Structure probing data (DMS and 2A3) for a 207-nucleotide construct.
DMS (dimethyl sulfate) methylates the pairing face of unpaired adenines and cytosines.
The DMS profile rests on 2,149 reads.
Reactivities are rounded to 0.1 and cut off at 0 and 3.
[RMDB]
RNA sequence: GGGAACGACUCGAGUAGAGUCGAAAACGCUGGGUGACAUUAGUCAAUAGGUAAGGGAGCUGAAGCGCGCACGGCGACGAUCUUACUAUUGAAUUUGUCACCUGUGCUGAAGCGCGCACGGCAACCGAAAGGUGCGAUAGUUGGAUUCGUCCAACAAGUGGAAAUCAUAGUUCGCUAUGAUUUCCACAAAAGAAACAACAACAACAAC
Reactivity to DMS in 0.01 (KOAc 150mM, MgCl2 10mM, bicine 150mM(pH8.5), 24C), signal-to-noise 1, nucleotides 027 to 156: c040g020c010u000g000g020g020u000g000a000c010a050u010u010a100g030u020c000a030a030u010a000g040g010u000a010a080g000g010g010a070g020c000u010g040a060a030g020c020g050c020g010c010a300c040g040g030c000g000a080c100g000a040u020c010u000u000a020c010u000a040u000u000g020a020a190u000u010u000g010u000c010a030c010c000u000g010u000g020c010u010g000a130a060g020c000g070c020g020c000a160c110g010g000c070a080a300c040c000g020a030a150a210g010g010u000g000c010g010a130u000a100g050u010u010g000g000a150u000u010c200g040u000c030c000a020a080c000a030a210
Reactivity to 2A3 in 0.01 (KOAc 150mM, MgCl2 10mM, bicine 150mM(pH8.5), 24C), signal-to-noise 3, nucleotides 027 to 156: c050g010c010u020g010g010g000u010g000a000c000a010u050u100a140g230u200c010a010a020u030a060g000g150u030a000a000g010g010g020a010g000c000u020g010a200a030g010c010g000c000g010c010a000c020g020g020c000g060a180c010g010a040u000c000u000u000a000c010u010a010u010u030g160a280a240u060u030u010g000u010c000a000c000c000u000g010u020g000c030u070g060a100a050g010c000g000c000g020c000a000c020g090g000c010a070a130c010c010g050a120a040a030g050g010u040g010c040g060a150u140a190g010u000u010g010g000a020u070u090c170g030u040c080c010a010a000c020a050a060